RNA sequence: GGGAACGACUCGAGUAGAGUCGAAAAGAUAUGGAUCUUCUUCUGAUGUCCCUCCUGGGAGAAGCAUGUCGGAAACGACAUGACUUCGACGAUCAGGACAUGGGACAUCAGAAGAAGAUCCUAAGUCCUCUACAUUAUAGUUCGCUAUAAUGUAGAGAAAAGAAACAACAACAACAAC
Reactivity to DMS in 0.01 (KOAc 150mM, MgCl2 10mM, bicine 150mM(pH8.5), 24C), signal-to-noise 4, nucleotides 027 to 126: g000a120u010a300u000g000g000a020u000c000u000u010c010u000u000c000u000g000a020u000g010u000c000c010c000u000c000c000u000g000g010g010a050g020a020a010g000c000a000u000g000u000c000g020g000a150a100a300c010g020a010c000a000u000g010a120c000u000u000c010g000a090c290g010a040u010c010a010g000g020a100c300a080u020g020g010g000a010c000a000u000c010a000g000a010a000g000a000a000g010a000u000c000c000u000a020a100g000u010c030
Source information
Structure probing data (DMS) for a 177-nucleotide construct. It was measured as part of the RMDB library TTRINS. The RNA was probed in 150 mM KOAc, 10 mM MgCl2 and 150 mM bicine (pH 8.5) at 24 C. For DMS the reverse transcriptase was MarathonRT.